[RMDB]
RNA sequence: GGGAACGACUCGAGUAGAGUCGAAAAGGGUCCGUCGAUCAUGUUCUUGAGCCAGCGUGGUGACUUCUGUUGUGGCUCACCGACGUUGAACUCGUCAUCGACUCCGAGGUACCAAUCCUCUCGGUGGCAUGAGUGGAUACUUCGGUAUCCACUCAUGAAAAGAAACAACAACAACAAC
Reactivity to 2A3 in 0.01 (KOAc 150mM, MgCl2 10mM, bicine 150mM(pH8.5), 24C), signal-to-noise 3, nucleotides 027 to 126: g050g030g000u030c030c030g030u010c010g050a060u070c050a080u110g130u250u000c070u140u170g010a020g010c000c000a000g020c020g030u050g050g020u060g120a110c020u130u040c040u190g250u170u200g090u090g050g010c010u020c000a010c020c000g090a020c000g000u000u060g010a080a030c010u010c020g040u060c020a060u010c010g000a020c030u020c050c040g000a000g050g000u070a150c020c020a000a110u020c000c000u010c010u020c040g080g000u040g050g000
Reactivity to DMS in 0.01 (KOAc 150mM, MgCl2 10mM, bicine 150mM(pH8.5), 24C), signal-to-noise 1, nucleotides 027 to 126: g020g020g000u010c040c060g010u000c050g010a080u000c100a070u010g010u010u000c060u010u000g010a050g010c080c020a040g000c040g030u000g010g010u000g010a060c060u000u000c060u000g010u000u000g040u000g010g000c240u000c000a020c060c010g000a020c020g010u000u000g000a070a110c020u000c030g030u000c090a080u000c040g010a060c120u000c080c050g000a060g000g010u010a220c120c090a060a130u000c010c010u000c060u000c040g010g030u010g000g020